[RMDB]
RNA sequence: GGGAACGACUCGAGUAGAGUCGAAAAGAUAUGGAGAUUGCGUUUCGAAGAACUCAUUCGGAAACGAAUGAGGGGAGAAACCAAUCUCCUAAGUCAAAACAAAUGGGUUGUUCGCAACCCAUUUGAACGUAUCUUCAAAGUUCGCUUUGAAGAUACGAAAAGAAACAACAACAACAAC
Reactivity to 2A3 in 0.01 (KOAc 150mM, MgCl2 10mM, bicine 150mM(pH8.5), 24C), signal-to-noise 3, nucleotides 027 to 126: g000a000u030a010u050g000g000a010g010a000u000u050g020c200g070u020u000u030c160g130a300a020g010a040a020c000u000c010a000u000u000c000g010g020a030a020a000c010g010a000a000u020g000a110g050g000g000g030a170g000a020a000a000c000c000a000a000u010c000u000c000c000u010a000a000g000u000c000a000a010a120a200c010a000a010a010u020g000g020g010u000u000g040u040u160c300g030c030a000a010c000c000c000a010u000u000u000g000a020a000
Reactivity to DMS in 0.01 (KOAc 150mM, MgCl2 10mM, bicine 150mM(pH8.5), 24C), signal-to-noise 5, nucleotides 027 to 126: g000a020u000a190u010g010g000a020g000a010u000u000g000c300g020u000u000u000c000g000a160a130g010a150a210c000u000c000a000u000u000c000g010g000a050a030a070c000g010a010a000u000g000a010g010g000g000g010a140g000a010a010a010c010c010a010a010u000c000u000c000c000u000a000a040g000u010c010a110a080a110a210c010a000a010a010u000g000g010g010u010u000g000u000u020c220g010c000a010a000c000c000c000a000u000u000u000g000a080a150

About this RNA: An RNA of 177 nucleotides, treated with 2A3 and DMS and read out base by base. For 2A3, 9,388 sequencing reads were counted. For DMS the reverse transcriptase was MarathonRT. 2A3 adducts were read by reverse transcription with SuperScript II with manganese. Conditions: 150 mM KOAc, 10 mM MgCl2 and 150 mM bicine (pH 8.5), 24 C. The DMS profile rests on 6,992 reads. The data come from the RNA Mapping Database (RMDB), library TTRDEL.